[RMDB]
RNA sequence: GGGAACGACUCGAGUAGAGUCGAAAAGAAACUUUCACAUGUCUUACUCUCUGUCCUAGUCCCAGAGCCUGUAAAGGUGAACCACUGGGACUGGCUGGGGGAGAAGAGGAAGAUUUGUUCCAGAAGGUACGGGAUUAACUUUCGAGUUAAUCCCGUAAAAAGAAACAACAACAACAAC
Reactivity to DMS in 0.01 (KOAc 150mM, MgCl2 10mM, bicine 150mM(pH8.5), 24C), signal-to-noise 4, nucleotides 027 to 126: g010a100a060a090c020u000u000u000c030a100c100a120u040g010u010c010u000u010a110c010u000c000u010c000u000g000u050c050c020u010a000g000u000c000c000c000a000g010a270g000c020c030u000g020u070a090a100a000g000g000u000g000a210a130c290c270a130c000u000g000g000g010a020c010u000g000g000c090u050g000g020g010g000g010a080g010a030a020g010a040g000g020a020a030g000a070u010u020u010g000u000u000c030c040a150g000a100a060g000g040
Reactivity to 2A3 in 0.01 (KOAc 150mM, MgCl2 10mM, bicine 150mM(pH8.5), 24C), signal-to-noise 3, nucleotides 027 to 126: g020a010a050a000c010u000u060u060c050a090c030a110u190g100u040c000u030u090a100c010u010c000u010c000u040g290u270c020c010u110a020g020u010c000c020c000a000g000a010g000c000c000u120g070u230a060a160a050g000g000u030g130a040a020c090c010a090c110u000g010g020g000a000c010u010g020g010c000u020g020g000g000g020g000a020g050a010a020g040a030g000g020a000a000g000a050u060u040u080g030u050u010c030c050a020g060a050a020g120g000